[RMDB]
RNA sequence: GGGAACGACUCGAGUAGAGUCGAAAAGAUUCACACCAGAUAUCUUUACUAUAGAUAGGGUAAAAAGGGGGUAUCUAUUCGUAUGGUUAUGUUCUAUUCAGUGGAAUAACGAUAAAAUAGAAAUUAGCUCACUCUAUCUUUUCGAAGAUAGAGUGAGAAAAGAAACAACAACAACAAC
Reactivity to DMS in 0.01 (KOAc 150mM, MgCl2 10mM, bicine 150mM(pH8.5), 24C), signal-to-noise 3, nucleotides 027 to 126: g000a140u000u000c060a110c170a100c120c060a100g010a100u010a010u010c010u000u010u000a180c070u020a170u010a020g010a110u000a040g000g000g000u000a040a070a050a110a090g000g000g010g010g010u000a240u010c000u000a020u000u000c150g000u010a020u000g000g000u000u000a030u000g010u010u000c020u010a050u010u010c250a190g000u020g000g000a060a040u000a030a020c020g000a030u000a040a040a020a020u010a020g000a030a070a140u010u010a100g000
Reactivity to 2A3 in 0.01 (KOAc 150mM, MgCl2 10mM, bicine 150mM(pH8.5), 24C), signal-to-noise 2, nucleotides 027 to 126: g040a080u130u120c040a010c000a030c080c020a000g040a300u040a060u000c000u040u230u110a190c040u080a080u030a260g040a070u060a020g020g030g100u100a140a050a050a050a050g050g000g060g000g030u030a020u030c000u030a030u030u060c080g050u040a000u020g000g000u010u010a020u040g130u000u040c030u020a060u110u180c020a020g090u000g110g000a050a030u070a050a010c000g010a000u050a050a080a000a000u030a010g010a000a050a000u110u080a080g000
Structure probing data (DMS and 2A3) for a 177-nucleotide construct. The reactions ran in a buffer of 150 mM KOAc, 10 mM MgCl2 and 150 mM bicine (pH 8.5), at 24 C. For DMS, 2,205 sequencing reads were counted.